Chemical mapping of a 177-nucleotide RNA with 2A3 and DMS. For DMS, 27,760 sequencing reads were counted. For 2A3, 14,290 sequencing reads were counted.

RNA sequence: GGGAACGACUCGAGUAGAGUCGAAAAUUUUAUUUUUGCUGCUGUCAGGACACCGAUGAAGACAGGAGUACCGUGCUGUACUUGCAGGACUGCGCCCAGCAGGCAGGGCAGGAGUCGCGGUUUAUCAACUCAUAUUACUAUUCGUAGUAAUAUGAGUAAAAGAAACAACAACAACAAC
Reactivity to 2A3 in 0.01 (KOAc 150mM, MgCl2 10mM, bicine 150mM(pH8.5), 24C), signal-to-noise 6, nucleotides 027 to 126: u020u040u030u050a130u050u110u030u150u130g020c010u000g010c000u010g010u020c010a050g070g110a080c050a080c150c100g130a170u150g080a090a040g020a010c010a010g000g030a000g020u020a050c000c020g050u050g060c020u040g010u180a300c010u040u030g000c000a040g040g230a080c020u010g000c010g010c000c010c000a000g000c000a000g000g020c010a000g020g000g000c000a010g040g050a080g040u060c040g010c030g030g000u030u110u090a100u090c040a020
Reactivity to DMS in 0.01 (KOAc 150mM, MgCl2 10mM, bicine 150mM(pH8.5), 24C), signal-to-noise 9, nucleotides 027 to 126: u010u010u010u010a090u020u020u010u010u010g010c020u000g000c020u000g010u000c030a110g010g010a150c110a110c080c090g010a100u010g010a150a120g000a040c040a030g000g000a050g020u000a030c030c030g020u000g010c040u000g010u000a080c030u000u000g020c010a160g010g010a230c030u000g000c040g000c020c010c010a240g000c030a020g000g010c020a050g000g010g010c010a040g000g000a090g020u010c090g010c030g010g000u000u000u000a080u010c140a130
2A3 adducts were read by reverse transcription with SuperScript II with manganese. For DMS the reverse transcriptase was MarathonRT.